RNA sequence: GGGAACGACUCGAGUAGAGUCGAAAACGUUUACGAACAGAUUUAAUACCUUUUGAUUUAAUCUUAGCUGGAUUAACUUUUAGUGCAUUCUGAACUUCGUCUAAAUCACUAUUUAACAUCAACGUACGUACUACGGGAAAUUCGUUUCCCGUAGUACAAAAGAAACAACAACAACAAC
Reactivity to 2A3 in 0.01 (KOAc 150mM, MgCl2 10mM, bicine 150mM(pH8.5), 24C), signal-to-noise 3, nucleotides 027 to 126: c020g000u030u100u070a040c050g010a080a000c010a050g070a090u100u060u180a130a100u210a160c010c000u070u100u100u090g080a060u060u020u110a050a010u010c010u020u070a040g050c060u090g050g040a030u010u030a060a050c010u080u080u070u130a050g000u020g000c020a020u060u000c020u030g030a090a060c030u020u050c020g060u010c060u050a040a050a030u100c040a030c070u090a080u110u130u070a090a060c040a060u080c010a000a060c030g080u090a030c050
Reactivity to DMS in 0.01 (KOAc 150mM, MgCl2 10mM, bicine 150mM(pH8.5), 24C), signal-to-noise 2, nucleotides 027 to 126: c070g010u010u020u010a040c050g010a100a080c100a120g000a090u010u000u010a080a060u030a100c090c030u000u000u000u010g010a020u010u000u000a040a030u000c000u000u000a120g000c130u000g000g000a040u000u010a030a040c060u010u000u010u020a030g020u000g000c100a040u010u000c050u000g010a030a090c080u000u000c070g000u010c070u010a030a050a040u010c070a030c120u000a050u000u000u000a070a110c150a050u000c060a020a030c120g010u000a070c300
This 177-nucleotide RNA was probed chemically with 2A3 and DMS.
Source: RMDB library OK2TST, as collected in RNAgym.
The reactions ran in a buffer of 150 mM KOAc, 10 mM MgCl2 and 150 mM bicine (pH 8.5), at 24 C.
2A3 adducts were read by reverse transcription with SuperScript II with manganese.
For 2A3, 2,194 sequencing reads were counted.
For DMS, 1,378 sequencing reads were counted.